RNA sequence: GGGAACGACUCGAGUAGAGUCGAAAAAAGAUAUGGACGUAACAGAGUAGACUUUGUCAACGAUGGUGGCUCGGAAACGAGCCACCAUUAGACAAAGGUCUACGACGAAGUUACGUCCUAAGUCAAACAUUGUGUCCGAGUUCGCUCGGACACAAUGAAAAGAAACAACAACAACAAC
Reactivity to DMS in 0.01 (KOAc 150mM, MgCl2 10mM, bicine 150mM(pH8.5), 24C), signal-to-noise 1, nucleotides 027 to 126: a130a050g000a010u020a300u000g000g020a040c000g010u000a000a010c000a050g050a200g000u010a010g010a030c010u000u000u000g010u000c000a130a120c300g000a010u000g010g020u000g010g050c000u000c010g010g010a170a050a200c000g000a000g030c000c000a000c000c000a000u000u000a080g030a070c000a000a000a000g030g020u000c000u010a020c060g000a220c230g000a090a070g000u010u010a000c030g020u000c000c050u010a000a100g060u000c010a150a040a140